[RMDB]
RNA sequence: GGGAACGACUCGAGUAGAGUCGAAAAUGGUAGUCAAGAAGAAUUGGCUGAGCCUGAUGCUGUCGGAUCUCAAACUCCCAUCGCCUCUGCUGAGGAAACCGAAGUCGGAGAGGCAAGCGACAGGGAACCUGUUACGUGUUUUCGAACACGUAACAGGAAAAGAAACAACAACAACAAC
Reactivity to DMS in 0.01 (KOAc 150mM, MgCl2 10mM, bicine 150mM(pH8.5), 24C), signal-to-noise 3, nucleotides 027 to 126: u000g020g030u000a050g030u000c020a030a080g010a170a130g000a160a120u000u000g020g000c020u000g000a130g020c010c040u000g020a080u000g010c020u000g010u000c030g010g000a150u000c020u000c110a030a100a130c140u000c010c000c010a190u000c120g000c000c000u000c030u000g000c070u000g010a110g000g010a040a060a070c170c080g000a110a070g020u010c030g010g010a040g000a130g000g010c030a040a050g000c000g000a020c030a050g020g000g010a110a170
Reactivity to 2A3 in 0.01 (KOAc 150mM, MgCl2 10mM, bicine 150mM(pH8.5), 24C), signal-to-noise 3, nucleotides 027 to 126: u090g020g050u070a000g020u000c020a050a030g110a140a030g080a120a300u090u020g040g010c030u090g040a050g060c010c010u040g000a030u110g040c030u050g030u070c040g040g050a190u050c030u030c070a070a130a090c040u020c010c010c010a000u020c010g000c000c010u010c000u050g070c040u020g050a080g110g070a160a000a040c020c030g050a150a030g180u200c040g040g000a090g000a000g020g020c000a000a010g000c010g000a000c040a050g010g000g030a020a060